[RMDB]
RNA sequence: GGGAACGACUCGAGUAGAGUCGAAAAUGGUGUCGACCCGCACCAGCGGUCCGUAUCUGCGGCAUGGGCAGACGAUCACCACGACUACGGUCCCCAGCCAGAUUGGCCCGGCGCUGGACGCCGCCAAACUCUCAACUGACUUCGGUCAGUUGAGAGUAAAAGAAACAACAACAACAAC
Reactivity to DMS in 0.01 (KOAc 150mM, MgCl2 10mM, bicine 150mM(pH8.5), 24C), signal-to-noise 2, nucleotides 027 to 126: u000g000g010u020g000u000c030g000a030c020c000c000g000c010a130c010c030a030g040c020g000g000u050c060c090g030u020a010u000c000u010g070c060g000g000c070a050u020g000g000g080c230a050g000a140c020g000a020u000c170a210c130c030a080c270g000a050c060u000a090c040g020g020u000c010c000c030c050a010g000c020c030a070g020a120u000u000g020g000c000c030c010g000g000c050g000c030u030g020g000a210c000g030c000c000g000c000c070a000a060
Reactivity to 2A3 in 0.01 (KOAc 150mM, MgCl2 10mM, bicine 150mM(pH8.5), 24C), signal-to-noise 4, nucleotides 027 to 126: u040g010g000u010g010u040c020g020a070c000c000c000g000c000a060c010c000a020g020c070g060g040u110c010c070g090u100a050u010c040u050g050c060g080g010c110a300u080g030g000g010c010a010g050a110c000g020a080u120c030a030c170c050a030c100g030a010c030u280a050c030g090g080u080c010c000c000c000a000g000c010c000a030g020a090u040u050g010g010c010c060c020g040g000c010g000c000u030g030g010a080c010g030c030c010g000c000c000a020a140